[RMDB]
RNA sequence: GGGAACGACUCGAGUAGAGUCGAAAAUGAUCGAGAGAUCUAACGAUGUACGCGAGUCAAACGCACAGACUCGAGCGAAAGCUCGGUCGAAAGACCGCGUACAUCGGUCGGCAAGUGUGGAGUCAAACAUAUUACCAGUGUUCGCACUGGUAAUAUGAAAAGAAACAACAACAACAAC
Reactivity to 2A3 in 0.01 (KOAc 150mM, MgCl2 10mM, bicine 150mM(pH8.5), 24C), signal-to-noise 6, nucleotides 027 to 126: u090g000a010u020c020g010a010g000a000g000a100u010c000u010a080a040c010g010a000u010g000u010a000c000g010c010g020a060g040u010c050a080a060a010c080g020c030a050c030a120g010a000c040u070c240g020a000g000c010g050a130a020a000g000c000u000c010g000g000u000c010g000a020a010a000g000a000c000c000g000c000g000u000a000c000a000u000c000g010g010u030c010g020g000c040a110a160g050u050g070u140g150g020a030g020u040c040a060a020a020
Reactivity to DMS in 0.01 (KOAc 150mM, MgCl2 10mM, bicine 150mM(pH8.5), 24C), signal-to-noise 9, nucleotides 027 to 126: u000g010a010u000c010g010a250g000a240g010a010u000c000u000a100a120c010g010a010u000g000u000a000c000g010c000g000a100g010u000c010a050a070a100c140g010c150a090c200a200g000a010c000u010c020g020a010g010c000g000a110a080a150g010c000u000c000g000g010u000c000g000a070a080a110g000a010c000c000g000c010g010u000a000c010a000u000c000g000g000u000c050g000g000c050a050a090g010u000g010u000g010g000a110g010u000c050a080a100a200
This 177-nucleotide RNA was probed chemically with 2A3 and DMS. High 2A3 reactivity points to a flexible backbone, as in loops and unpaired stretches. Values cover nucleotides 27 to 126. Conditions: 150 mM KOAc, 10 mM MgCl2 and 150 mM bicine (pH 8.5), 24 C. For DMS the reverse transcriptase was MarathonRT. For 2A3 the reverse transcriptase was SuperScript II with manganese. The 2A3 profile rests on 18,836 reads.